[RMDB]
RNA sequence: GGGAACGACUCGAGUAGAGUCGAAAAAUGAACAAGAAGCAGAUACUAGGCUUAUUCGAUGGGUAAAAGGUCUCAAAUACUCAAAGCCCUAAUACACGUACGGAGUCGAAUAAGUAUAUCUGACAGGUAGUCGCCUCUAAUUCGUUAGAGGCGACUAAAAAGAAACAACAACAACAAC
Reactivity to 2A3 in 0.01 (KOAc 150mM, MgCl2 10mM, bicine 150mM(pH8.5), 24C), signal-to-noise 2, nucleotides 027 to 126: a000u130g060a040a000c070a080a070g150a090a000g100c030a010g000a010u000a000c090u300a180g160g000c000u000u000a000u010u000c040g000a030u070g000g000g050u020a050a050a000a000g000g030u020c010u000c040a050a100a000u120a160c050u060c100a060a080a080g030c000c000c000u010a080a060u100a040c200a000c140g080u230a010c090g170g000a020g000u000c000g020a000a000u020a000a000g040u010a000u060a000u060c030u040g290a090c020a010g120g060
Reactivity to DMS in 0.01 (KOAc 150mM, MgCl2 10mM, bicine 150mM(pH8.5), 24C), signal-to-noise 2, nucleotides 027 to 126: a070u020g010a220a130c130a100a040g000a190a130g030c000a020g030a000u060a070c300u040a120g020g010c010u060u000a000u010u010c000g020a000u010g000g000g000u010a050a050a220a150g030g000u000c020u080c220a120a070a140u110a020c150u020c160a150a110a030g000c130c000c000u000a030a220u030a000c000a110c090g060u000a030c200g000g000a170g030u000c000g000a040a000u010a000a000g010u000a090u060a040u000c000u000g000a050c060a030g020g010